This 177-nucleotide RNA was probed chemically with 2A3 and DMS.
RNA sequence: GGGAACGACUCGAGUAGAGUCGAAAAACCCGGUUUUUCUUCGCAUUCUUUUUUAUCUUCCCCUGACUGGGAGGCGUUUCGUCAUGUGAUAAAGAAUGCGAAGACGAACAAGAAGGCCUCCCCCACCUUUGCGUCAAAUAUUCGUAUUUGACGCAAAAAAAGAAACAACAACAACAAC
Reactivity to 2A3 in 0.01 (KOAc 150mM, MgCl2 10mM, bicine 150mM(pH8.5), 24C), signal-to-noise 4, nucleotides 027 to 126: a000c000c010c000g000g000u020u010u010u010u000c000u000u000c000g000c000a000u010u000c000u020u120u050u020u070u110a040u060c020u050u040c010c000c010c000u110g160a170c050u080g040g010g010a040g020g000c010g090u150u170u240c050g020u040c050a070u210g050u080g090a010u020a050a010a000g000a000a000u000g010c000g000a000a000g000a000c000g010a010a000c010a030a010g130a030a030g060g010c000c020u050c010c000c000c000c000a020c010c020
Reactivity to DMS in 0.01 (KOAc 150mM, MgCl2 10mM, bicine 150mM(pH8.5), 24C), signal-to-noise 3, nucleotides 027 to 126: a100c000c000c020g010g000u000u000u000u000u000c000u000u000c010g000c000a010u000u000c000u000u010u010u010u020u010a040u040c040u000u010c040c000c000c110u020g010a160c300u020g010g020g000a060g000g020c070g020u020u020u020c090g020u000c020a120u040g020u030g000a020u010a010a030a000g000a000a000u000g000c000g000a020a010g010a000c030g000a000a000c010a100a100g000a100a090g000g010c030c000u000c010c000c000c020c050a140c130c070
The reactions ran in a buffer of 150 mM KOAc, 10 mM MgCl2 and 150 mM bicine (pH 8.5), at 24 C. It was measured as part of the RMDB libraries RFM100 and RFMREP.